The record gives the reactivity of an RNA of 177 nucleotides to 2A3 and DMS. The 2A3 profile rests on 1,279 reads. For DMS the reverse transcriptase was MarathonRT. For DMS, 2,143 sequencing reads were counted.

[RMDB]
RNA sequence: GGGAACGACUCGAGUAGAGUCGAAAAUGAAAUCAAAAUAAGAGAGGUAAUGUAGGAGAAUAGAAUACAUUGGUAUUGGUCCUAUUGUCACAAAAUGACCGUAAUUACCACCACCAAAAUAAAAAAAUACUUAAAGAUAGUUCGCUAUCUUUAAGUAAAAAGAAACAACAACAACAAC
Reactivity to 2A3 in 0.01 (KOAc 150mM, MgCl2 10mM, bicine 150mM(pH8.5), 24C), signal-to-noise 2, nucleotides 027 to 126: u080g030a030a000a120u110c060a080a020a130a130u270a300a010g050a000g010a020g040g020u020a030a000u040g010u050a000g100g050a080g040a090a110u070a130g090a090a000u020a070c070a140u000u220g120g000u080a080u010u080g090g010u010c010c000u000a020u040u120g040u050c030a000c020a130a140a020a050u040g010a010c020c000g030u010a020a000u040u040a000c000c020a000c040c000a040c000c000a010a050a100a020u190a070a100a000a010a030a000a030
Reactivity to DMS in 0.01 (KOAc 150mM, MgCl2 10mM, bicine 150mM(pH8.5), 24C), signal-to-noise 2, nucleotides 027 to 126: u020g000a110a070a100u010c070a060a070a050a090u010a070a070g000a120g010a040g040g010u000a010a000u000g010u010a060g020g000a060g030a090a140u010a110g020a100a050u010a030c050a140u000u000g010g040u000a060u010u000g000g010u000c150c070u000a010u010u000g000u000c020a000c080a090a050a040a300u000g000a010c010c110g000u010a060a030u000u000a020c000c010a100c070c050a030c040c070a040a050a040a060u020a000a030a010a070a060a090a140